[RMDB]
RNA sequence: GGGAACGACUCGAGUAGAGUCGAAAACGAUCAGUACGUUCGCGUACUGAUCGAAGCUACUGGAGACAGUAGCAAGUCUAAGACCUUGUUAGGCUUAAACAAGGAAAAAUGGAGGAAGGCCGGACCUCCAUACUUAGACAAAGGCCAACCGGCCAACCCUGGUAGCGUAGUUCGCUACGCUACCAGGAAAAGAAACAACAACAACAAC
Reactivity to 2A3 in 0.01 (KOAc 150mM, MgCl2 10mM, bicine 150mM(pH8.5), 24C), signal-to-noise 1, nucleotides 027 to 156: c010g000a000u000c000a010g020u000a000c010g060u110u050c220g030c000g090u000a010c010u000g000a000u000c000g030a000a010g010c000u000a010c000u000g010g000a020g000a040c000a010g000u000a000g000c010a000a020g000u050c000u000a020a020g090a240c010c000u020u010g030u040u020a180g090g130c000u040u220a110a020a000c010a000a000g000g120a000a050a170a030a030u020g010g010a000g000g090a090a300g010g000c040c000g020g030a230c000c000u090c000c000a000u020a000c000u000u000a000g000a010c000a070a060a010g050g000c000c010a000a000c010c000g000g010c000c000a040a040c010